RNA sequence: GGGAACGACUCGAGUAGAGUCGAAAACAUCAUAGUGAAGUUCCAGCUUACAGGAGUCUUACCAGACUGAGCAUCUUCAACAGCAGCAGCAGUCAAAGGAUUCUCAGACUUCAUAUCAGCAAAGCUCCCGACCUGGUGGAUUCGUCCACCAGGUCGGAAAAGAAACAACAACAACAAC
Reactivity to 2A3 in 0.01 (KOAc 150mM, MgCl2 10mM, bicine 150mM(pH8.5), 24C), signal-to-noise 1, nucleotides 027 to 126: c150a000u100c010a010u240a140g090u100g020a090a060g000u090u000c000c000a010g000c000u030u060a030c000a020g050g000a000g000u130c000u170u130a070c000c040a050g000a000c000u000g000a000g000c010a060u030c050u230u060c110a130a170c000a070g020c030a000g000c000a000g070c010a000g000u030c030a070a000a210g020g010a040u090u000c000u130c100a050g000a050c000u010u020c000a000u030a070u150c050a000g090c100a130a000a000g010c010u000c000

Conditions: 150 mM KOAc, 10 mM MgCl2 and 150 mM bicine (pH 8.5), 24 C.
This 177-nucleotide RNA was probed chemically with 2A3.